[RMDB]
RNA sequence: GGGAACGACUCGAGUAGAGUCGAAAAUUCCUCGAUGCCGGAGUGCUGGAAGUCCAUAGCUCCGCGGGAGCGUGGCAAGCCUCACCGAUGCGUUAUCGUAAUCAAGGAUUGUCCAUGUCAUCAGAUGCAGUAACAUCGUGUUCGCACGAUGUUACUGAAAAGAAACAACAACAACAAC
Reactivity to 2A3 in 0.01 (KOAc 150mM, MgCl2 10mM, bicine 150mM(pH8.5), 24C), signal-to-noise 2, nucleotides 027 to 126: u040u010c000c000u030c030g020a020u070g020c040c030g080g020a020g030u030g070c080u000g120g040a140a120g080u070c030c000a010u020a110g020c040u040c020c060g120c040g040g190g030a020g060c000g000u020g010g020c010a010a000g030c000c000u000c040a100c050c060g000a010u070g070c050g040u120u050a250u250c010g030u040a020a200u050c010a000a040g010g030a020u040u030g010u030c020c010a040u080g090u050c020a070u030c030a020g020a110u140g000
Reactivity to DMS in 0.01 (KOAc 150mM, MgCl2 10mM, bicine 150mM(pH8.5), 24C), signal-to-noise 2, nucleotides 027 to 126: u000u000c010c000u000c130g010a060u000g000c090c050g010g030a050g000u000g010c170u020g000g020a230a130g010u010c000c040a050u020a210g000c000u000c010c000g080c110g020g010g020a070g000c000g020u010g000g000c000a090a030g020c000c000u000c090a100c240c080g000a050u020g010c090g040u010u020a090u000c010g000u000a070a060u010c070a080a050g000g000a050u000u010g000u000c010c020a030u010g020u000c030a050u000c060a120g010a100u040g020